This 207-nucleotide RNA was probed chemically with 2A3.
For 2A3 the reverse transcriptase was SuperScript II with manganese.

RNA sequence: GGGAACGACUCGAGUAGAGUCGAAAAAGUGUAUGAAGUACGUAAAGUGUCGGCAAGCUCUAUAUAUGGACACUUACGAAGGGUUUUGGUUGUUUUGUAUCUCAAGCCGACUUUGAGUAUUUGAGGAAAAAGACUUACGCCUUCGGGCGUAAGUCAAGCUAAGUGAAUCGUUCGCGAUUCACUUAGCAAAAGAAACAACAACAACAAC
Reactivity to 2A3 in 0.01 (KOAc 150mM, MgCl2 10mM, bicine 150mM(pH8.5), 24C), signal-to-noise 2, nucleotides 027 to 156: a000g100u050g020u040a060u190g110a120a020g060u070a050c000g000u030a050a010a140g000u010g010u020c020g060g080c050a100a090g010c050u020c080u030a090u060a110u040a080u260g040g000a000c000a000c000u010u030a010c000g030a050a040g010g000g040u010u030u090u150g080g010u020u000g030u000u020u010u020g010u030a100u060c050u010c040a030a030g000c000c000g080a110c030u060u050u130g030a050g010u040a120u080u100u110g000a060g000g060a030a150a010a080a070g010a000c000u000u000a000c000g010c000c000u050u070c170g100g000g000c010g000u000a000a000g000u000c000a000a000